RNA sequence: GGGAACGACUCGAGUAGAGUCGAAAACGGUUACGCCUUCUUUACCGUUAUCAAGGAAGGUACUCGGCCAUGCUAAGGGAAGCAUUAUUCCUUAGGCGCAGGUCGCCGCCAGCAUGGUGUGAGGGGAAAAAGUAUGCUGGGUUCGCCCAGCAUACAAUCGAUAGACUUUGUUCGCAAAGUCUAUCGAAAAAGAAACAACAACAACAAC
Reactivity to DMS in 0.01 (KOAc 150mM, MgCl2 10mM, bicine 150mM(pH8.5), 24C), signal-to-noise 3, nucleotides 027 to 156: c020g030g010u000u000a010c020g000c020c000u000u010c000u000u000u000a040c010c010g040u000u010a050u000c130a020a040g000g030a030a010g000g030u000a050c060u000c020g010g030c010c000a030u000g000c000u000a200a130g000g030g010a040a050g050c180a170u000u020a170u000u000c000c000u000u000a100g020g030c010g070c040a210g020g040u000c040g030c040c000g030c140c080a110g030c000a040u000g010g040u000g000u010g000a080g020g030g020g000a080a060a120a100a120g010u000a000u000g020c000u000g030g010g010u000u020c300g000c010c000c010a010g010c020a000u010a000c000a000a070
Reactivity to 2A3 in 0.01 (KOAc 150mM, MgCl2 10mM, bicine 150mM(pH8.5), 24C), signal-to-noise 6, nucleotides 027 to 156: c000g000g010u030u030a020c070g000c000c000u010u020c010u010u040u060a010c010c000g280u140u090a050u110c070a010a000g050g000a000a010g000g010u040a050c010u010c010g030g000c010c000a000u010g010c010u040a060a080g000g000g020a020a010g030c090a160u150u120a120u240u060c000c010u040u060a050g010g000c010g000c030a090g060g180u170c030g000c020c000g030c030c030a000g010c000a000u000g010g020u080g140u130g020a020g030g030g030g050a020a140a010a040a010g000u000a000u000g000c000u010g010g000g050u030u040c110g070c020c000c020a000g010c000a000u000a000c000a000a020

Chemical mapping of a 207-nucleotide RNA with DMS and 2A3. It was measured as part of the RMDB library M2RFPK. The reactions ran in a buffer of 150 mM KOAc, 10 mM MgCl2 and 150 mM bicine (pH 8.5), at 24 C. 2A3 adducts were read by reverse transcription with SuperScript II with manganese.